[RMDB]
The record gives the reactivity of an RNA of 177 nucleotides to DMS. It was measured as part of the RMDB library OK2TST. DMS (dimethyl sulfate) methylates the pairing face of unpaired adenines and cytosines. The RNA was probed in 150 mM KOAc, 10 mM MgCl2 and 150 mM bicine (pH 8.5) at 24 C.
RNA sequence: GGGAACGACUCGAGUAGAGUCGAAAAAAGGGUAUCGGCGCUGCCCGUGCCGAGCGCAUCUGGCGCAGGGCACGCCGUCUGCGCGACGUCCCGGAGGCUCUGGGGCUGCUGAACCAGCUUCCCGGCGUAAGGGUACGUAGUUCGCUACGUACCCUUAAAAAGAAACAACAACAACAAC
Reactivity to DMS in 0.01 (KOAc 150mM, MgCl2 10mM, bicine 150mM(pH8.5), 24C), signal-to-noise 3, nucleotides 027 to 126: a050a090g010g010g000u000a090u010c010g010g020c000g020c260u000g000c020c010c030g030u000g000c010c000g010a090g000c240g030c160a120u010c080u010g040g010c000g020c000a100g020g010g030c030a030c000g010c020c000g010u000c070u000g000c080g010c030g010a080c130g010u000c010c010c010g000g020a100g010g030c070u000c040u010g010g020g000g020c020u010g000c060u010g000a120a120c100c020a060g000c040u000u000c000c000c060g000g010c110g020